[RMDB]
Chemical mapping of a 177-nucleotide RNA with 2A3 and DMS.
RNA sequence: GGGAACGACUCGAGUAGAGUCGAAAAGUAGCAGUCUCAUUUGCUCCAUAUGUGAGAGUGCCCUUCAGCUUCAUCUCGGCACAGAGGCCGCACGCUGUGAAGUAGUGCUUGUUUGGCAGGAAGGGGACGUCGUAAAUCGGUUCGCCGAUUUACGACGAAAAGAAACAACAACAACAAC
Reactivity to 2A3 in 0.01 (KOAc 150mM, MgCl2 10mM, bicine 150mM(pH8.5), 24C), signal-to-noise 1, nucleotides 027 to 126: g100u060a000g030c000a010g060u040c000u040c010a120u250u070u050g030c040u000c000c030a100u110a030u140g010u080g030a050g000a000g020u060g040c000c000c000u000u030c040a070g010c010u020u010c030a060u050c000u070c040g000g070c050a040c030a100g180a040g060g060c000c000g030c000a070c000g070c090u040g050u010g090a040a000g000u180a000g060u000g020c010u090u050g240u190u050u200g080g000c030a050g070g000a040a010g050g010g010g000a010
Reactivity to DMS in 0.01 (KOAc 150mM, MgCl2 10mM, bicine 150mM(pH8.5), 24C), signal-to-noise 2, nucleotides 027 to 126: g020u020a040g020c000a070g000u000c010u000c000a050u000u000u000g010c010u000c030c050a090u020a060u010g020u010g010a030g000a080g010u000g010c020c020c030u000u000c030a230g000c030u000u000c040a050u000c100u000c080g030g030c060a110c160a110g000a170g000g020c020c040g010c050a040c060g010c140u000g000u000g010a100a030g000u000a060g040u000g010c030u000u010g010u000u010u000g010g020c020a100g010g010a050a030g000g000g000g000a120
Description
It was measured as part of the RMDB library OK2TST.